[RMDB]
RNA sequence: GGGAACGACUCGAGUAGAGUCGAAAACGGCUGGACCGCCAUCCGAUCAAGCGGGCGCGCACCACCUUUACCUACGUUGCGGUGGCCGUUGCCGGCAGCGACGACCAGAAGGCGGCCUUUCGUCGCGCCGCUACUACUUAUUCGUAAGUAGUAGCGGAAAAGAAACAACAACAACAAC
Reactivity to DMS in 0.01 (KOAc 150mM, MgCl2 10mM, bicine 150mM(pH8.5), 24C), signal-to-noise 9, nucleotides 027 to 126: c030g010g020c040u000g010g010a060c020c010g010c000c010a080u010c020c030g010a050u000c050a220a300g010c020g000g000g020c020g010c030g000c190a130c010c010a030c010c000u000u000u000a060c040c120u010a090c240g010u000u010g020c160g010g020u000g010g020c300c010g000u000u010g040c010c010g010g020c040a100g000c060g000a150c200g000a030c030c050a070g010a030a050g020g010c000g000g000c020c040u000u000u000c120g020u000c020g010c130g010
Reactivity to 2A3 in 0.01 (KOAc 150mM, MgCl2 10mM, bicine 150mM(pH8.5), 24C), signal-to-noise 6, nucleotides 027 to 126: c010g020g000c010u030g010g040a300c010c000g000c000c000a030u020c020c020g040a160u020c030a060a020g020c020g010g010g000c010g000c000g000c020a060c010c000a000c000c000u050u170u090a070c030c060u080a100c170g090u080u080g070c050g020g000u000g010g000c030c000g020u050u300g010c010c000g140g040c020a040g020c010g030a050c080g010a030c020c050a020g020a060a020g010g000c000g000g000c010c000u020u030u030c020g020u010c030g000c040g010
An RNA of 177 nucleotides, treated with DMS and 2A3 and read out base by base. Source: RMDB library OK2TRN, as collected in RNAgym. Reactivities are given for positions 27 through 126. DMS adducts were read by reverse transcription with MarathonRT. 2A3 is a SHAPE reagent: it acylates the 2'-hydroxyl of flexible nucleotides of all four kinds. Values are in units of 0.01, from 0 to 300, in steps of 10.